[RMDB]
RNA sequence: GGGAACGACUCGAGUAGAGUCGAAAAACAUAAGGUCAUGGAAUGUCAAUGACGAUCUGGUCCAGGAGGCAGAUGGCCAUCUUCCUCCAGCCCUCAGCAAGUAUUUCUCAUUGGUGCCUCGUGCUGGUUAAGCUUUGUUUUCCUGCCCCAUAAGGUACCCUAAAAUGAUGUUCGCAUCAUUUUAGGGAAAAGAAACAACAACAACAAC
Reactivity to DMS in 0.01 (KOAc 150mM, MgCl2 10mM, bicine 150mM(pH8.5), 24C), signal-to-noise 2, nucleotides 027 to 156: a050c060a070u000a070a120g020g020u010c040a130u000g060g010a110a090u010g010u000c040a070a090u020g030a080c070g020a070u010c040u000g020g000u000c050c020a130g010g010a120g000g040c060a040g030a060u010g010g030c110c060a160u000c000u010u010c010c010u010c020c010a120g010c050c000c020u010c030a100g000c050a040a140g040u000a060u010u010u000c040u010c050a190u000u000g020g010u010g020c020c010u010c050g030u000g030c010u000g000g020u000u000a060a120g010c030u020u000u010g020u010u000u000u010c000c000u000g010c000c010c020c030a090u000a060a040g010g020u000a160
Reactivity to 2A3 in 0.01 (KOAc 150mM, MgCl2 10mM, bicine 150mM(pH8.5), 24C), signal-to-noise 4, nucleotides 027 to 156: a000c050a080u170a120a030g060g020u040c020a030u100g040g070a130a070u160g040u130c080a070a110u060g020a010c060g050a100u030c060u100g030g040u030c050c060a100g000g000a010g000g000c020a010g010a040u050g120g040c030c040a040u000c000u020u000c000c000u000c000c010a000g010c000c000c010u030c010a020g010c020a010a090g040u080a100u030u060u020c060u010c050a100u030u060g020g000u030g020c010c010u030c070g050u070g030c030u020g040g060u070u090a040a030g000c000u050u060u080g050u040u070u030u010c000c000u000g020c020c000c000c010a040u090a120a000g120g000u130a080
The data come from the RNA Mapping Database (RMDB), library OK3TST.
An RNA of 207 nucleotides, treated with DMS and 2A3 and read out base by base.
The reactions ran in a buffer of 150 mM KOAc, 10 mM MgCl2 and 150 mM bicine (pH 8.5), at 24 C.
For 2A3, 3,118 sequencing reads were counted.